[RMDB]
RNA sequence: GGGAACGACUCGAGUAGAGUCGAAAAGAUAUGGAUCUAUGGUGCUAGCCUCCACAUCGGAAACGAUGUGAAGGCUUGGACCACCUGUAGAUCCUAAGUCAAAGAAUUCGCCUUCGGGCGAAUUCAAUCUAUGUAUAACCUUCGGGUUAUACAUAGAAAAAGAAACAACAACAACAAC
Reactivity to 2A3 in 0.01 (KOAc 150mM, MgCl2 10mM, bicine 150mM(pH8.5), 24C), signal-to-noise 2, nucleotides 027 to 126: g000a020u070a040u140g010g000a010u000c010u000a020u140g000g000u040g040c070u050a030g010c010c020u020c020c010a000c000a010u000c010g040g000a070a050a010c000g010a020u000g000u050g000a000a010g020g000c000u000u040g000g030a020c050c010a000c010c040u150g050u040a010g000a010u000c000c010u020a100a020g030u030c040a120a000a240g010a010a010u010u000c000g010c000c000u050u110c300g170g000g030c000g000a010a000u000u000c000a000a000
Reactivity to DMS in 0.01 (KOAc 150mM, MgCl2 10mM, bicine 150mM(pH8.5), 24C), signal-to-noise 6, nucleotides 027 to 126: g000a050u000a300u000g010g000a020u000c000u010a020u010g010g020u000g010c060u000a040g010c010c000u000c030c000a010c000a010u000c010g010g010a130a080a190c010g010a010u000g010u000g010a010a000g000g010c000u000u010g010g010a110c300c010a020c070c040u010g040u000a010g000a000u000c000c000u000a030a080g000u000c040a130a190a220g000a030a010u000u000c000g020c000c000u000u010c300g040g010g030c000g010a000a000u000u000c000a090a090